An RNA of 177 nucleotides, treated with DMS and 2A3 and read out base by base. High DMS reactivity at an A or C suggests that its Watson-Crick edge is free. The RNA was probed in 150 mM KOAc, 10 mM MgCl2 and 150 mM bicine (pH 8.5) at 24 C. Values cover nucleotides 27 to 126.
RNA sequence: GGGAACGACUCGAGUAGAGUCGAAAAGGCUUCGGCCUGCCUUUCCUGUUGCCCGAGACAGGACUUCCAACGUGCGGGGGGGCAACGGAAGUCCAUCUCGUCGUCUCAACCGGGAUUGAUCACGAUUGCAUAGGUGUGUAUUCGUACACACCUAUGCAAAAGAAACAACAACAACAAC
Reactivity to DMS in 0.01 (KOAc 150mM, MgCl2 10mM, bicine 150mM(pH8.5), 24C), signal-to-noise 2, nucleotides 027 to 126: g020g000c000u010u050c050g030g080c000c020u000g000c070c040u010u010u040c000c010u020g000u000u000g000c150c010c000g040a030g000a020c070a090g010g010a000c000u000u000c000c020a280a240c220g010u000g040c090g020g050g000g010g040g000g000c050a090a100c200g000g070a080a000g000u000c000c000a300u000c030u000c010g000u030c050g020u020c040u000c020a050a010c100c150g000g000g000a060u030u000g000a050u010c150a090c060g000a120u000u000
Reactivity to 2A3 in 0.01 (KOAc 150mM, MgCl2 10mM, bicine 150mM(pH8.5), 24C), signal-to-noise 2, nucleotides 027 to 126: g000g000c020u040u070c110g110g010c000c000u030g030c000c030u020u030u010c010c010u020g030u010u020g030c000c000c000g000a000g000a010c140a150g020g000a000c010u000u020c010c020a120a110c180g050u050g030c110g040g020g030g000g000g000g000c030a060a000c030g000g000a000a000g000u000c000c000a020u000c000u000c010g050u030c010g030u020c020u010c060a020a050c020c000g020g020g010a050u030u050g030a050u090c090a010c170g140a180u020u020